[RMDB]
RNA sequence: GGGAACGACUCGAGUAGAGUCGAAAAUUUUGUGUUUCUCCUUAUACUAUGCUCAAUCAGCUAGUCAUUCCAUGGCUUUAAGAUUACAAUGUACUUGAGUCAUUGACAUGUGAGAUCAAUAUACCUGGGUUACUGAGUCUUUCGAGACUCAGUAACCAAAAGAAACAACAACAACAAC
Reactivity to 2A3 in 0.01 (KOAc 150mM, MgCl2 10mM, bicine 150mM(pH8.5), 24C), signal-to-noise 2, nucleotides 027 to 126: u010u050u010u110g110u050g020u000u190u000c050u030c000c010u130u080a090u020a050c000u000a030u300g010c000u020c070a260a260u140c000a080g000c000u040a000g030u000c010a030u100u000c040c040a000u000g000g000c010u000u060u230a020a020g000a060u220u000a170c140a030a180u300g100u080a060c000u000u040g000a000g000u000c040a000u030u000g000a030c040a210u150g070u030g040a000g010a000u030c020a210a020u040a000u050a180c000c170u130g070